[RMDB]
RNA sequence: GGGAACGACUCGAGUAGAGUCGAAAAGUGGCACGUGUGCAGCCACGAAGGUUGGUAACACCGGAUCAACCGAUGUACACGACGUCUCGGAAUGCCAUGUUGAGACGUAUGGUAUUCCAACCGGUGAGGCUUGCUAGAUGUUCGCAUCUAGCAAGCCAAAAGAAACAACAACAACAAC
Reactivity to 2A3 in 0.01 (KOAc 150mM, MgCl2 10mM, bicine 150mM(pH8.5), 24C), signal-to-noise 1, nucleotides 027 to 126: g030u010g000g040c040a020c030g020u020g010u000g040c000a000g000c000c000a020c000g030a150a030g000g000u000u000g020g000u000a000a000c010a000c000c020g000g010a000u010c000a000a000c000c000g020a030u000g010u000a000c000a000c010g050a160c160g220u020c060u090c190g000g000a040a010u000g000c000c000a020u040g080u070u090g070a120g040a040c050g020u030a000u000g000g000u000a020u020u020c000c000a020a050c000c000g000g000u010g040a050
Structure probing data (2A3) for a 177-nucleotide construct. Conditions: 150 mM KOAc, 10 mM MgCl2 and 150 mM bicine (pH 8.5), 24 C.